[RMDB]
RNA sequence: GGGAACGACUCGAGUAGAGUCGAAAAGGUGCAGAUUACUCCAUGAAGGCGGAGUAUCCCCACCCAAUCGACGUCGUCAGUCGCCUGACCAUUUCGUGGAUUGACGGAUCGGGACAACCAAUCGACUUUCGUGGGUUUGAUAACAACGCAUUUGUACCUAAUAGUUCUCGUUCGCGAGAACUAUUAGAAAAGAAACAACAACAACAAC
Reactivity to 2A3 in 0.01 (KOAc 150mM, MgCl2 10mM, bicine 150mM(pH8.5), 24C), signal-to-noise 9, nucleotides 027 to 156: g020g000u030g000c020a010g010a110u100u090a030c010u020c010c010a020u120g130a080a050g070g040c080g000g020a020g010u010a030u020c000c010c000c000a010c000c000c000a000a030u020c020g110a000c020g040u070c020g000u020c020a020g060u140c040g070c130c010u020g010a030c000c030a140u090u150u160c040g000u040g060g020a030u010u040g030a070c090g010g020a070u140c070g000g000g030a040c050a060a020c080c010a030a060u090c020g120a190c030u050u070u030c050g010u080g030g010g000u040u080u150g100a100u120a110a030c090a050a020c070g030c080a070u040u040u160g050u110a050c000
Reactivity to DMS in 0.01 (KOAc 150mM, MgCl2 10mM, bicine 150mM(pH8.5), 24C), signal-to-noise 4, nucleotides 027 to 156: g030g020u010g020c090a080g020a210u000u000a060c040u000c010c020a070u000g020a090a080g030g020c030g030g000a090g010u000a080u000c030c020c040c030a110c000c000c020a030a160u000c010g010a050c010g010u000c300g010u010c010a030g030u000c140g020c150c030u000g000a090c050c070a150u000u010u000c030g040u010g010g010a090u000u010g010a080c060g000g000a100u000c030g030g010g020a090c020a080a080c020c030a090a240u010c050g010a220c010u000u000u000c030g030u000g010g020g000u000u000u010g010a140u000a070a070c040a060a070c060g010c030a110u000u000u020g010u010a160c050